[RMDB]
RNA sequence: GGGAACGACUCGAGUAGAGUCGAAAACUCUCAUACAUUGCCAGAUUGUUUGAGAAACAGGCAAAAAGAGACACAACUUGACCGAAAGUUCGAACCUUCUCGUUGAAACAACAGAAUUCCUUGUCGAACAAUUUGCGUUUUUCGAAACGCAAAUUGUAAAAGAAACAACAACAACAAC
Reactivity to 2A3 in 0.01 (KOAc 150mM, MgCl2 10mM, bicine 150mM(pH8.5), 24C), signal-to-noise 1, nucleotides 027 to 126: c010u010c000u000c010a010u070a170c050a010u030u020g010c000c000a080g060a300u100u060g120u080u060u100g260a080g110a060a020a060c020a010g000g000c000a040a000a000a040a000g040a000g020a020c020a000c000a110a160c050u090u120g060a060c030c040g040a100a040a000g070u020u010c000g000a070a010c000c000u060u000c020u000c010g020u020u020g080a170a180a020c000a000a000c000a010g000a060a030u040u050c040c040u060u050g100u100c030g040a030
Reactivity to DMS in 0.01 (KOAc 150mM, MgCl2 10mM, bicine 150mM(pH8.5), 24C), signal-to-noise 2, nucleotides 027 to 126: c080u000c020u000c000a070u010a130c100a130u000u000g060c060c160a110g020a130u010u010g000u000u010u000g000a100g000a100a120a020c030a090g010g020c060a010a050a120a150a090g030a060g010a090c150a100c090a060a050c060u010u040g010a070c040c020g010a060a090a020g000u010u000c050g020a030a170c080c030u010u000c050u000c090g000u010u010g000a090a040a050c120a060a050c060a040g000a080a110u060u000c000c030u000u010g030u000c060g020a100
This 177-nucleotide RNA was probed chemically with 2A3 and DMS. The RNA was probed in 150 mM KOAc, 10 mM MgCl2 and 150 mM bicine (pH 8.5) at 24 C. Values are in units of 0.01, from 0 to 300, in steps of 10. For 2A3 the reverse transcriptase was SuperScript II with manganese. For DMS, 985 sequencing reads were counted.